[RMDB]
RNA sequence: GGGAACGACUCGAGUAGAGUCGAAAACGUUGCGUAUUGCUACAACACUUGGUUAGCUAUUUAGCUUUACUAAUCAAGACGCCGUCGUGCAGCCCACAAAAGUCUAGAUACGUCACAGGAGAGCAUAGCAAUAGUUAUACUUCGGUAUAACUAUUGCAAAAGAAACAACAACAACAAC
Reactivity to 2A3 in 0.01 (KOAc 150mM, MgCl2 10mM, bicine 150mM(pH8.5), 24C), signal-to-noise 5, nucleotides 027 to 126: c050g050u050u070g020c010g010u070a060u070u180g050c030u090a050c020a140a000c030a040c040u020u020g020g000u010u020a000g010c080u030a090u120u130u150a060g000c020u060u050u060a040c020u020a000a020u030c010a010a000g090a110c060g050c050c040g090u060c010g000u050g010c050a030g040c020c050c000a030c030a010a130a000a000g030u000c030u060a000g010a100u050a100c050g010u020c040a010c040a070g050g040a080g020a000g030c060a090u140a040
Reactivity to DMS in 0.01 (KOAc 150mM, MgCl2 10mM, bicine 150mM(pH8.5), 24C), signal-to-noise 6, nucleotides 027 to 126: c130g010u010u000g010c040g010u010a090u000u010g010c060u000a090c050a090a080c110a220c020u000u000g010g010u000u010a010g000c140u000a070u000u000u010a100g000c150u000u000u000a110c020u000a030a020u000c020a010a020g000a150c140g020c070c090g000u000c080g000u010g020c040a110g000c020c010c020a060c160a040a050a080a060g000u000c040u000a040g010a070u000a050c080g010u010c060a030c060a080g010g000a060g000a060g020c090a070u010a120
The record gives the reactivity of an RNA of 177 nucleotides to 2A3 and DMS.
The reactions ran in a buffer of 150 mM KOAc, 10 mM MgCl2 and 150 mM bicine (pH 8.5), at 24 C.
For 2A3 the reverse transcriptase was SuperScript II with manganese.